[RMDB]
RNA sequence: GGGAACGACUCGAGUAGAGUCGAAAAUUCCCGCUGACAAUAGCGUUAUCCCUCUGCACUUCGGUAAUAUGAGGGCACAGUAAAUCCCGCAAGGAUGAGAAUGUGAUGUGGAAUGAGUAAAUCUAAGCUAAAUAUCAAGGUUCGCCUUGAUAUUUAGAAAAGAAACAACAACAACAAC
Reactivity to DMS in 0.01 (KOAc 150mM, MgCl2 10mM, bicine 150mM(pH8.5), 24C), signal-to-noise 9, nucleotides 027 to 126: u010u000c000c000c000g010c060u000g010a100c090a070a070u010a110g010c030g010u010u000a080u010c000c000c000u000c000u000g000c090a020c020u000u010c200g030g010u000a050a190u000a130u010g000a010g000g000g010c040a010c010a010g000u000a070a200a020u000c000c000c040g010c300a150a300g000g000a010u000g000a090g000a100a120u000g000u000g000a090u000g010u000g010g010a100a070u000g000a080g000u000a060a080a110u000c040u010a100a100g010
Reactivity to 2A3 in 0.01 (KOAc 150mM, MgCl2 10mM, bicine 150mM(pH8.5), 24C), signal-to-noise 4, nucleotides 027 to 126: u010u020c040c010c000g000c080u070g050a050c080a190a200u080a110g030c010g050u090u110a100u120c000c010c000u010c000u010g010c010a010c030u050u060c160g070g000u040a040a040u080a060u300g010a020g000g010g000c000a000c000a010g020u000a020a030a020u040c010c010c010g100c100a040a020g030g000a000u000g010a010g050a010a030u020g010u020g000a060u070g070u130g070g130a080a140u130g040a110g120u110a070a110a090u050c070u060a090a010g060